Structure probing data (DMS) for a 177-nucleotide construct. The data come from the RNA Mapping Database (RMDB), library OK2TRN. Values are in units of 0.01, from 0 to 300, in steps of 10. The RNA was probed in 150 mM KOAc, 10 mM MgCl2 and 150 mM bicine (pH 8.5) at 24 C. High DMS reactivity at an A or C suggests that its Watson-Crick edge is free.
[RMDB]
RNA sequence: GGGAACGACUCGAGUAGAGUCGAAAAAAACUUAAACUAUGUGGCAUUGGCUUUGGAAUCAGACAAUGGAUAGAAGCCAGAAGGAUUUCACAAAGACUGUUAGUGAAAAGUGAACAGACUUCAAGGAAGGAUGCAAUCUUUUCGAAGAUUGCAUCCUAAAAGAAACAACAACAACAAC
Reactivity to DMS in 0.01 (KOAc 150mM, MgCl2 10mM, bicine 150mM(pH8.5), 24C), signal-to-noise 1, nucleotides 027 to 126: a100a020a070c070u000u000a100a030a130c070u040a050u000g000u000g020g010c110a090u010u000g000g010c030u000u000u000g020g000a090a050u020c020a070g000a080c190a100a060u010g030g000a020u000a100g000a020a030g000c020c000a010g020a050a120g000g010a110u000u000u000c020a070c000a050a110a110g030a090c070u000g020u010u030a050g010u000g000a050a120a100a080g000u000g000a020a040c160a020g040a080c090u000u000c070a030a110g020g000a160